[RMDB]
RNA sequence: GGGAACGACUCGAGUAGAGUCGAAAACCGACCCGAAAGUAACUUAAGACGCGGAAGGGAGAGUCAAAAAGAGAAAGAGACCUAAAGGGUGAAAGCGAAUCGGGGAAGAUAAGCUAGCAGCAAAAAGACAACUGAGUUUAUUCGUAAACUCAGUUGUAAAAGAAACAACAACAACAAC
Reactivity to 2A3 in 0.01 (KOAc 150mM, MgCl2 10mM, bicine 150mM(pH8.5), 24C), signal-to-noise 8, nucleotides 027 to 126: c010c000g040a040c010c000c000g050a080a060a020g050u060a010a040c030u080u060a080a030g070a040c050g030c040g160g030a040a020g060g020g000a060g010a000g050u030c040a030a040a040a090a010g110a010g060a060a080a000g080a010g040a020c010c020u110a090a050a030g060g010g000u040g040a060a030a000g040c050g020a020a030u050c020g010g000g020g020a020a030g050a100u120a090a030g010c040u060a030g030c050a010g010c030a010a110a050a040a000g070
Reactivity to DMS in 0.01 (KOAc 150mM, MgCl2 10mM, bicine 150mM(pH8.5), 24C), signal-to-noise 6, nucleotides 027 to 126: c010c020g010a180c040c020c010g000a100a100a090g020u010a100a100c060u020u030a090a100g000a070c080g020c080g000g010a250a100g000g000g010a060g000a080g020u020c040a050a070a060a130a090g010a090g000a050a060a070g010a110g000a070c030c020u000a050a110a090g000g000g010u000g000a060a050a080g010c030g000a110a090u000c030g030g000g000g010a040a080g020a060u020a040a100g010c020u010a070g020c100a050g020c120a040a030a070a070a060g000

An RNA of 177 nucleotides, treated with 2A3 and DMS and read out base by base. Source: RMDB libraries RFM100 and RFMREP, as collected in RNAgym.